Annotation: Chemical mapping of a 177-nucleotide RNA with DMS and 2A3. The RNA was probed in 150 mM KOAc, 10 mM MgCl2 and 150 mM bicine (pH 8.5) at 24 C. Values cover nucleotides 27 to 126. High 2A3 reactivity points to a flexible backbone, as in loops and unpaired stretches.
[RMDB]
RNA sequence: GGGAACGACUCGAGUAGAGUCGAAAACCCAGGGGGUCUGCAGCAGCACUAGCAUCAGCCCCCAGUGCAGGGAAGGGUCCCGUGCUGGCGCACAGCCCAAAGGCCGCCCACCCCUUGGGCUCUUCUCAACAGUUCAAUUUUUCGAAAUUGAACUGUUAAAAGAAACAACAACAACAAC
Reactivity to DMS in 0.01 (KOAc 150mM, MgCl2 10mM, bicine 150mM(pH8.5), 24C), signal-to-noise 7, nucleotides 027 to 126: c000c000c000a130g010g010g020g010g010u010c050u000g020c130a090g020c040a110g010c060a120c130u000a110g020c020a060u000c090a100g000c020c010c010c010c010a020g010u010g010c120a160g010g000g010a050a070g010g010g000u010c020c030c170g000u000g010c040u000g020g000c120g020c110a090c180a100g000c000c010c050a020a080a120g010g000c020c060g000c020c020c040a150c140c010c020c030u010u000g010g010g000c020u000c040u000u000c020u000c040
Reactivity to 2A3 in 0.01 (KOAc 150mM, MgCl2 10mM, bicine 150mM(pH8.5), 24C), signal-to-noise 3, nucleotides 027 to 126: c000c000c010a000g030g000g010g000g010u090c040u060g050c060a060g000c010a020g040c040a060c140u160a060g010c020a090u050c060a060g050c000c000c010c000c000a000g010u030g060c050a010g000g010g050a040a080g080g020g030u060c020c030c010g010u040g010c060u090g030g060c080g000c030a100c090a100g020c020c010c000a120a120a070g030g010c010c010g020c000c030c000a020c000c010c000c000u020u030g010g000g000c010u010c030u030u040c020u000c010